[RMDB]
RNA sequence: GGGAACGACUCGAGUAGAGUCGAAAAUCUUAGGAGUUCGCUCCUAAGAAAAGGGCGAGGCCGUGCCAGCUCUUCGGAGGAAUACUCGGCCAGUCACUCAGAAUGCGCUACCCUUCGGGGUAGCGAAUGCGUUACUAAGGUUCGCCUUAGUAACGCAAAAAGAAACAACAACAACAAC
Reactivity to 2A3 in 0.01 (KOAc 150mM, MgCl2 10mM, bicine 150mM(pH8.5), 24C), signal-to-noise 1, nucleotides 027 to 126: u040c000u000u000a000g010g000a000g030u030u040c080g080c040u000c000c000u000a000a000g010a000a000a000a000g050g000g030c060g060a280g000g000c010c010g000u030g050c080c070a170g020c010u010c000u050u050c170g140g010a000g010g060a080a040u050a140c030u000c010g000g000c020c020a000g000u020c000a020c040u080c010a060g170a220a140u190g110c030g000c000u010a000c000c010c000u010u090c250g020g020g000g000u010a000g010c000g010a010a010
Reactivity to DMS in 0.01 (KOAc 150mM, MgCl2 10mM, bicine 150mM(pH8.5), 24C), signal-to-noise 2, nucleotides 027 to 126: u000c000u000u000a000g000g030a030g010u000u000c260g020c000u000c000c000u010a010a000g000a040a040a090a070g020g010g010c000g010a110g020g000c000c000g040u000g000c060c070a290g010c010u000c010u000u000c090g050g010a050g010g020a110a140u000a070c050u030c040g030g010c000c010a160g020u000c030a080c040u000c060a090g000a100a070u000g030c000g010c000u000a010c000c000c000u000u010c170g020g010g000g060u010a000g000c000g010a020a010